Background
Chemical mapping of a 207-nucleotide RNA with 2A3. The data come from the RNA Mapping Database (RMDB), library M2RFPK. Reactivities are given for positions 27 through 156. 2A3 adducts were read by reverse transcription with SuperScript II with manganese.

RNA sequence: GGGAACGACUCGAGUAGAGUCGAAAAGGGUGAGACCUAGGAACCGUAGGGGUAUUCUCAAAGGAAGCUUUUGCAGUGACGCCCAUGUAAGUGGGAUCUAACAACAGAACUCGUAUGAGUAGCCUAAUAAAUCGGACCUUCUUCGGAAGGUCCGAAAGAAACGCAUAAGCUUCGGCUUAUGCGUUUCAAAAGAAACAACAACAACAAC
Reactivity to 2A3 in 0.01 (KOAc 150mM, MgCl2 10mM, bicine 150mM(pH8.5), 24C), signal-to-noise 1, nucleotides 027 to 156: g070g000g010u100g040a090g010a030c080c050u050a060g030g060a100a060c030c160g000u100a040g000g000g020g000u040a090u130u000c060u050c020a070a060a030g160g030a060a090g010c020u010u000u090u080g000c020a020g030u010g060a010c040g040c000c000c040a020u050g070u090a120a180g010u010g000g000g010a000u110c050u060a030a020c050a000a010c000a010g000a040a010c000u020c050g070u190a090u240g000a000g000u010a060g000c030c030u010a130a080u050a100a120a030u040c030g000g020a000c000c000u000u000c010u000u010c070g060g000a000a000g020g000u000c000c000g000a000a000a000